[RMDB]
RNA sequence: GGGAACGACUCGAGUAGAGUCGAAAAUGCCAUAUUCAUGGCAGUACUGUUAACUCUCCAAACACCCACCGGUCAAAUCCAUUGGGGCAAUCUCUCUAAGAUAGGGGUGGUAGGGAUAGGAAGUGCAAAGUUUUGGGAUGUUCGCAUCCCAAAACUUAAAAGAAACAACAACAACAAC
Reactivity to DMS in 0.01 (KOAc 150mM, MgCl2 10mM, bicine 150mM(pH8.5), 24C), signal-to-noise 1, nucleotides 027 to 126: u000g000c010c000a000u000a170u020u020c190a010u000g000g000c000a030g030u020a030c060u010g050u000u000a040a050c150u000c030u000c000c010a120a080a210c090a110c020c010c010a080c030c020g020g000u000c100a030a020a040u000c080c130a200u000u030g010g000g000g000c280a060a040u030c070u040c010u080c000u000a090a110g030a150u000a010g000g000g000g000u000g000g020u040a010g000g000g000a080u000a100g000g020a120a000g000u000g000c040a060
Reactivity to 2A3 in 0.01 (KOAc 150mM, MgCl2 10mM, bicine 150mM(pH8.5), 24C), signal-to-noise 1, nucleotides 027 to 126: u030g000c040c010a030u040a160u040u230c260a000u000g000g010c000a000g000u010a040c050u010g130u120u040a090a030c000u000c010u020c010c000a000a220a110c000a020c020c020c000a000c000c030g050g210u090c050a000a000a140u180c020c030a020u000u210g000g000g000g080c050a110a030u030c030u000c000u000c100u210a000a230g030a080u090a180g040g000g000g010u000g000g020u050a170g010g000g000a000u020a000g050g050a070a000g010u000g070c000a020
An RNA of 177 nucleotides, treated with DMS and 2A3 and read out base by base. For 2A3 the reverse transcriptase was SuperScript II with manganese. High 2A3 reactivity points to a flexible backbone, as in loops and unpaired stretches. The reactions ran in a buffer of 150 mM KOAc, 10 mM MgCl2 and 150 mM bicine (pH 8.5), at 24 C.